[RMDB]
RNA sequence: GGGAACGACUCGAGUAGAGUCGAAAAGCCAACGCGUGAGCGUUGGCAAGUACCGCACGUGAGUGCGGUACAGUUCAGUCUACGGACUGAACAACGACGCGCUUCGGCGCGUCGACCGUCUUACUACGGUAAGACGGAGUUCUGCGUACGCGCAGAACAGGUUCACGUGAGUGAACCAAGCAAUCACUUCGGUGAUUGCAGGCACUCUACGGAGUGCCAAGUAACGAGCUACGGCUCGUUACACGUGGUGCGUACGAUAACGCAUUACAUCACAGUUCGCUGUGAUGAAAAGAAACAACAACAACAAC
Reactivity to 2A3 in 0.01 (KOAc 150mM, MgCl2 10mM, bicine 150mM(pH8.5), 24C), signal-to-noise 9, nucleotides 027 to 266: g000c000c000a000a000c000g050c030g060u160g120a120g030c000g000u000u000g000g000c000a000a000g000u000a000c000c000g030c000a000c010g090u110g120a100g010u000g010c000g000g000u000a000c000a000g000u000u000c000a000g000u000c010u020a050c300g120g000a000c000u000g000a000a000c000a010a030c040g000a000c000g020c000g010c010u060u100c270g130g000c000g000c000g000u000c000g000a020c000c000g000u000c000u000u010a000c010u010a020c220g110g010u000a000a000g000a000c000g000g000a040g000u000u000c000u010g000c000g010u040a080c260g010c000g000c130a000g000a000a000c020a060g000g010u000u000c000a000c010g070u100g120a080g000u000g000a020a000c000c000a010a030g000c000a000a000u000c000a000c020u060u130c230g110g000u000g000a000u000u000g000c000a000g000g000c000a000c000u000c000u040a040c300g110g000a000g000u000g000c000c000a000a020g000u000a000a000c000g000a000g000c010u050a050c280g110g000c000u010c000g000u000u000a000c010a000c010g020u060g090g010u020g010c010g010u010a010c020g040a110u030a030a000c010g000c000a000u010u120a040
Reactivity to DMS in 0.01 (KOAc 150mM, MgCl2 10mM, bicine 150mM(pH8.5), 24C), signal-to-noise 4, nucleotides 027 to 266: g020c010c000a010a000c010g030c000g020u030g010a300g030c010g040u000u010g020g010c010a010a020g000u000a000c010c010g040c000a030c010g000u010g000a110g020u000g010c000g000g010u000a000c010a070g010u000u000c000a010g000u000c000u000a130c150g020g000a010c000u000g000a000a000c000a170a250c060g010a010c000g010c000g000c000u000u040c200g020g010c000g010c000g010u000c000g000a110c000c000g010u000c010u010u000a010c000u000a110c130g020g010u000a000a000g010a010c010g000g000a080g010u020u000c010u000g000c000g010u000a120c200g020c010g010c010a000g010a010a010c010a070g000g000u000u000c010a000c000g010u020g000a140g000u000g000a000a010c000c020a110a090g010c000a010a000u000c000a000c010u000u030c140g030g010u010g010a010u000u000g010c000a040g010g000c000a010c000u000c000u000a130c140g010g010a020g010u000g020c000c000a040a030g010u000a000a010c000g010a010g010c000u000a090c190g020g010c010u000c000g000u000u000a000c000a300c040g010u000g010g010u010g000c010g010u010a030c040g010a080u020a030a020c010g000c010a010u010u010a170